This 177-nucleotide RNA was probed chemically with 2A3 and DMS. For 2A3, 7,526 sequencing reads were counted. Source: RMDB library OK1LIB, as collected in RNAgym. For 2A3 the reverse transcriptase was SuperScript II with manganese. Reactivities are given for positions 27 through 126. For DMS, 7,417 sequencing reads were counted. The RNA was probed in 150 mM KOAc, 10 mM MgCl2 and 150 mM bicine (pH 8.5) at 24 C.
RNA sequence: GGGAACGACUCGAGUAGAGUCGAAAACACCUCAUCGGUGCAGAACCGCGGAUUGCCUUGCUCAUCGGUGAUCGACACCAGCACGUCGAGCAUGUCGCGGUCACGCUUGUCGGUCGGCGGGUUGGCGAGUGAUACUGACUUUCGAGUCAGUAUCACUAAAAGAAACAACAACAACAAC
Reactivity to 2A3 in 0.01 (KOAc 150mM, MgCl2 10mM, bicine 150mM(pH8.5), 24C), signal-to-noise 5, nucleotides 027 to 126: c080a040c010c020u070c030a100u040c040g000g030u040g020c030a010g020a130a040c020c010g020c030g050g010a100u130u200g060c020c020u050u130g010c020u020c050a100u060c060g110g000u050g020a110u150c060g040a030c010a030c040c000a020g020c050a030c050g080u070c060g020a040g040c070a070u090g030u060c030g000c010g040g060u040c020a010c050g030c010u040u140g070u090c030g020g040u000c030g000g030c000g030g000g000u030u040g010g020c040g030
Reactivity to DMS in 0.01 (KOAc 150mM, MgCl2 10mM, bicine 150mM(pH8.5), 24C), signal-to-noise 4, nucleotides 027 to 126: c060a080c040c010u000c130a060u040c090g000g000u000g000c070a090g010a050a040c040c070g030c030g010g010a070u000u000g020c080c050u030u020g010c030u000c070a090u020c100g020g000u000g010a130u010c170g000a130c060a060c090c030a090g020c080a080c140g010u010c070g010a030g010c040a060u010g000u020c020g020c040g000g000u020c060a060c070g010c010u000u020g000u010c020g000g010u000c030g010g010c040g000g010g000u010u010g010g000c120g020